[RMDB]
RNA sequence: GGGAACGACUCGAGUAGAGUCGAAAACGACGGCGCGGGCUCGGAUGUCCUCAUGAUCGGCUUCUCGCGUUACGGGCAGAUCGCGGCACAGAUUCUCCUUGCCGGCGGCAUUGAUGUGACUGUGAUAUAUCGAUCAUACCUUCGGGUAUGAUCGAUAAAAAGAAACAACAACAACAAC
Reactivity to DMS in 0.01 (KOAc 150mM, MgCl2 10mM, bicine 150mM(pH8.5), 24C), signal-to-noise 2, nucleotides 027 to 126: c100g010a070c110g010g010c020g030c110g000g000g000c110u000c110g010g010a040u020g000u000c010c070u000c090a150u020g000a060u000c080g000g000c020u010u010c060u000c080g020c080g010u010u000a100c090g000g000g000c050a110g000a050u000c050g020c100g000g010c150a040c200a100g000a170u010u000c110u000c030c020u000u000g010c000c010g000g020c120g020g010c030a030u000u000g010a110u010g010u000g010a120c040u000g030u010g000a150u000a170
Chemical mapping of a 177-nucleotide RNA with DMS. Values cover nucleotides 27 to 126. The DMS profile rests on 1,499 reads. The RNA was probed in 150 mM KOAc, 10 mM MgCl2 and 150 mM bicine (pH 8.5) at 24 C.